[RMDB]
RNA sequence: GGGAACGACUCGAGUAGAGUCGAAAAGUGACCGCUUCCAUUAAUGAGGCUUUCGACGGUAUCGUGACUUCCAAAAUGAAGGGCUGUAAGACUGCACUCAAAGAGUGCACUGUGAGUAGAGUGGUGGCGCUACAUUAGAUUUCGAUCUAAUGUAGCGAAAAGAAACAACAACAACAAC
Reactivity to DMS in 0.01 (KOAc 150mM, MgCl2 10mM, bicine 150mM(pH8.5), 24C), signal-to-noise 9, nucleotides 027 to 126: g010u010g000a120c060c050g020c050u000u000c030c070a150u010u010a070a090u010g010a100g000g010c050u000u000u000c050g010a080c070g010g010u000a130u000c060g010u000g000a120c120u000u000c020c050a050a060a090a090u010g010a080a080g000g010g010c030u000g000u000a080a090g000a080c140u000g000c010a020c010u000c020a090a120a150g000a030g020u000g010c010a010c080u000g010u000g000a080g010u010a050g010a080g020u000g010g010u000g010g010
Reactivity to 2A3 in 0.01 (KOAc 150mM, MgCl2 10mM, bicine 150mM(pH8.5), 24C), signal-to-noise 6, nucleotides 027 to 126: g070u060g060a060c020c010g000c030u060u000c030c010a080u070u180a120a100u230g060a030g020g000c000u030u050u070c040g040a040c050g040g060u070a050u100c030g020u050g050a040c020u050u020c030c010a110a080a010a040u170g020a040a030g030g020g000c030u040g030u070a050a020g040a050c040u020g000c010a010c010u000c020a190a230a050g030a010g010u010g010c010a010c020u050g020u040g040a060g030u070a030g020a010g050u040g010g040u030g030g010